An RNA of 177 nucleotides, treated with DMS and 2A3 and read out base by base. Reactivities are given for positions 27 through 126. The RNA was probed in 150 mM KOAc, 10 mM MgCl2 and 150 mM bicine (pH 8.5) at 24 C.
RNA sequence: GGGAACGACUCGAGUAGAGUCGAAAAGUAAACGAUGAGUGCUAAGUGUUAGAGGGUUUCCGCCCUUUAGUGCUGAAGUUAACGCAUUAAGCACUCCGCCUGGGGAGUACGGCCGCAAGGCUGAAACCUCUAUUAUUAAGUUCGCUUAAUAAUAGAGAAAAGAAACAACAACAACAAC
Reactivity to DMS in 0.01 (KOAc 150mM, MgCl2 10mM, bicine 150mM(pH8.5), 24C), signal-to-noise 7, nucleotides 027 to 126: g020u010a080a080a150c090g000a110u010g010a030g020u000g010c000u000a160a030g020u000g010u000u000a010g000a010g000g000g010u000u010u010c300c300g010c000c000c000u000u000u000a010g020u000g000c010u010g000a120a070g010u000u010a080a110c210g010c040a050u010u000a050a060g000c020a010c000u000c000c060g000c020c020u000g000g000g010g010a200g020u000a070c060g010g000c010c010g020c300a080a120g000g010c000u000g010a060a120a070c130
Reactivity to 2A3 in 0.01 (KOAc 150mM, MgCl2 10mM, bicine 150mM(pH8.5), 24C), signal-to-noise 3, nucleotides 027 to 126: g050u050a040a090a050c050g030a100u090g010a000g010u020g000c010u030a040a010g000u010g000u030u020a010g010a000g030g040g030u040u190u090c080c120g020c000c010c030u010u030u010a010g000u020g010c010u020g030a090a020g030u070u120a080a020c070g000c050a020u090u100a040a000g000c000a000c000u020c000c010g010c000c020u020g000g010g000g000a050g060u100a050c020g010g020c000c000g040c040a030a040g030g000c000u010g010a030a000a000c010